RNA sequence: GGGAACGACUCGAGUAGAGUCGAAAAGAUAUGGACAUGCGUAGGGAGCUGGACAUCGGAAACGAUGUCCCAGCAUCGAUCUACCAUGUCCUAAGUCAAAACGAAGGGCGCUUCGGCGCCCUUCGAAUCCACAGGUAAUGUUCGCAUUACCUGUGGAAAAAGAAACAACAACAACAAC
Reactivity to DMS in 0.01 (KOAc 150mM, MgCl2 10mM, bicine 150mM(pH8.5), 24C), signal-to-noise 2, nucleotides 027 to 126: g000a030u000a110u020g010g010a040c010a010u000g010c290g010u010a020g010g000g000a110g030c000u000g020g000a040c010a010u000c010g010g000a060a010a020c020g020a000u000g010u000c240c200c080a020g010c000a270u010c300g000a100u010c000u010a000c000c000a030u000g010u000c000c000u000a000a030g000u000c010a100a040a130a250c030g000a010a010g000g000g020c000g090c030u000u000c220g020g020c000g000c010c000c000u000u000c000g000a050a060
Chemical mapping of a 177-nucleotide RNA with DMS. DMS adducts were read by reverse transcription with MarathonRT. The data come from the RNA Mapping Database (RMDB), library TTRDES. Conditions: 150 mM KOAc, 10 mM MgCl2 and 150 mM bicine (pH 8.5), 24 C.